[RMDB]
An RNA of 207 nucleotides, treated with 2A3 and DMS and read out base by base. As a SHAPE reagent, 2A3 marks flexible, mostly unpaired nucleotides at the ribose 2'-OH. Conditions: 150 mM KOAc, 10 mM MgCl2 and 150 mM bicine (pH 8.5), 24 C. Reactivities are given for positions 27 through 156. The 2A3 profile rests on 4,504 reads. The data come from the RNA Mapping Database (RMDB), library RNAMAK.
RNA sequence: GGGAACGACUCGAGUAGAGUCGAAAAGAUAUGGACAGGCUUUGAUCGAUACGAGUUGCAGUGGGAUCGGAAACGAUCCCACCAAUCAACGAUGAGUAUCGGGAGCCUGUCCUAAGUCAAAGCCUGAAAUGCUUGGUUCGCCAAGCAUUUCAGGCAACUCAUUAUGUUGGUUCGCCAACAUAAUGAGAAAAGAAACAACAACAACAAC
Reactivity to 2A3 in 0.01 (KOAc 150mM, MgCl2 10mM, bicine 150mM(pH8.5), 24C), signal-to-noise 3, nucleotides 027 to 156: g020a010u080a020u110g000g000a020c000a000g010g000c030u130u130u130g130a160u260c040g000a000u010a000c030g030a050g110u000u010g010c050a030g020u000g000g000g000a000u010c000g010g060a060a060a020c020g010a000u010c020c020c000a000c010c000a000a020u080c000a000a020c010g130a200u220g100a030g050u010a000u000c000g010g010g000a000g000c000c000u000g000u010c000c000u000a000a000g000u000c010a010a080a020g000c000c000u000g000a000a000a000u000g000c000u010u010g010g010u070u130c200g030c090c000a000a000g000c000a000u000u000u000c000a000g000g000c000a000a000
Reactivity to DMS in 0.01 (KOAc 150mM, MgCl2 10mM, bicine 150mM(pH8.5), 24C), signal-to-noise 1, nucleotides 027 to 156: g010a070u010a210u000g000g010a030c010a010g010g020c000u010u010u020g020a110u010c030g020a010u000a000c000g020a300g000u010u000g010c060a030g040u030g040g020g030a010u010c020g030g010a140a100a290c010g000a010u000c000c010c000a000c010c030a050a120u030c030a080a020c000g000a010u000g000a300g010u000a000u010c020g010g000g030a000g010c000c020u000g000u000c000c000u010a030a090g020u000c060a080a170a130g000c000c000u010g010a010a020a000u000g010c020u000u000g000g010u020u010c300g010c000c010a000a030g000c000a000u000u000u000c010a000g000g020c000a000a000